[RMDB]
RNA sequence: GGGAACGACUCGAGUAGAGUCGAAAAAGGGGGGACCCCAGGGUCAACCUACGGAAAUCCCUGAGUUCCUCGGAUGUCCAGGCCGUCCCCUCUUCUAGAGAAGGGAGACUCCGGAACUUCUUCCAUGGCGCAGAAUCGUUCGCGAUUCUGAAAAGAAACAACAACAACAAC
Reactivity to 2A3 in 0.01 (KOAc 150mM, MgCl2 10mM, bicine 150mM(pH8.5), 24C), signal-to-noise 9, nucleotides 027 to 129: a000g020g000g000g000g000g010a010c010c010c020c010a050g060g000g040u100c020a070a080c030c000u050a050c080g010g030a020a060a070u120c040c020c040u070g040a100g050u040u020c010c000u010c010g020g010a050u050g020u000c030c030a030g020g020c040c030g020u010c000c000c010c000u000c000u010u000c020u050a080g010a010g010a070a080g030g020g010a050g010a040c010u010c020c000g020g040a050a050c020u080u030c010u080u010c050c020a100u120g080g000c070g000
Reactivity to DMS in 0.01 (KOAc 150mM, MgCl2 10mM, bicine 150mM(pH8.5), 24C), signal-to-noise 9, nucleotides 027 to 129: a050g020g000g010g000g010g000a080c020c180c050c070a080g010g000g020u000c030a060a110c040c020u020a090c260g010g030a040a040a040u040c020c030c050u000g000a150g000u030u020c000c010u010c250g030g000a020u030g030u030c030c020a060g010g030c070c160g000u010c030c000c020c000u000c020u000u020c030u000a100g000a090g000a070a060g010g030g010a030g000a100c000u010c010c020g000g000a080a060c100u050u030c040u000u000c070c070a070u000g000g000c100g010